[RMDB]
RNA sequence: GGGAACGACUCGAGUAGAGUCGAAAACAAGAAAUGUUGUAAUUGAUAGAUAUGUUAAAAAAUUAAUUGGAGGAGGGAAUGAUGCAUGUUGUGAAAUUUUUGCAACCAAUAGUACUGGGCAUCAUAGACCUCGUACGUAGUUCGCUACGUACGAGGUAAAAGAAACAACAACAACAAC
Reactivity to 2A3 in 0.01 (KOAc 150mM, MgCl2 10mM, bicine 150mM(pH8.5), 24C), signal-to-noise 1, nucleotides 027 to 126: c000a000a110g200a080a000a020u200g000u060u100g120u030a170a000u050u000g000a030u140a090g110a000u110a050u170g210u110u030a000a000a000a000a000a100u190u140a050a130u060u000g020g070a030g000g000a080g000g000g010a000a020u020g000a000u020g000c180a090u020g050u000u000g040u000g050a050a300a300u180u130u000u060u060g000c010a080a050c000c000a020a130u050a000g020u000a000c120u120g080g000g000c000a000u000c000a000u030a000g050
Reactivity to DMS in 0.01 (KOAc 150mM, MgCl2 10mM, bicine 150mM(pH8.5), 24C), signal-to-noise 1, nucleotides 027 to 126: c060a100a200g000a040a120a080u010g070u020u000g010u010a020a090u000u000g000a070u030a050g000a060u040a040u010g030u020u000a000a010a070a000a020a140u040u040a030a070u020u010g010g030a050g000g010a050g000g000g000a070a020u000g010a030u020g000c010a040u010g000u040u000g020u000g000a020a100a160u020u070u010u000u020g000c050a010a010c020c160a050a030u040a150g010u000a100c120u010g010g040g050c010a040u040c000a000u010a060g000
Record summary: Structure probing data (2A3 and DMS) for a 177-nucleotide construct. It was measured as part of the RMDB library RFM100. DMS adducts were read by reverse transcription with MarathonRT. Conditions: 150 mM KOAc, 10 mM MgCl2 and 150 mM bicine (pH 8.5), 24 C.